[RMDB]
RNA sequence: GGGAACGACUCGAGUAGAGUCGAAAACGAGCCUCGUUCGCGAGGCUCGAAAGGCGGCGAAAGCUCGACUUAAUGUCGAAAGUGUAACGCCAAUCCCACACAAAAGGCUGCCGUUCGCGGCAGCCAACUGUGAAUACUUGUUCGCAAGUAUUCACAGAAAAGAAACAACAACAACAAC
Reactivity to DMS in 0.01 (KOAc 150mM, MgCl2 10mM, bicine 150mM(pH8.5), 24C), signal-to-noise 2, nucleotides 027 to 126: c030g020a020g010c020c020u000c000g000u020u000c130g030c000g020a020g000g020c000u020c000g000a000a050a100g030g000c170g000g000c040g010a040a140a190g000c040u000c000g020a000c010u010u020a200a100u010g000u000c000g000a040a060a080g040u000g000u000a090a120c010g000c000c010a040a150u000c000c000c000a080c230a070c200a080a090a090a130g000g030c000u010g000c000c000g000u010u000c200g010c020g000g020c000a000g010c020c010a000a020
Reactivity to 2A3 in 0.01 (KOAc 150mM, MgCl2 10mM, bicine 150mM(pH8.5), 24C), signal-to-noise 2, nucleotides 027 to 126: c000g000a000g020c000c010u010c010g030u060u020c060g030c010g110a000g020g000c000u000c000g000a000a000a000g010g010c040g000g010c060g060a100a030a000g030c010u000c020g010a000c010u150u280a230a070u300g000u010c000g030a090a080a040g080u130g030u110a100a000c020g010c010c020a000a030u010c010c010c000a010c000a010c010a010a030a000a040g020g010c000u000g000c000c030g020u030u050c240g010c010g090g000c000a000g000c000c000a000a000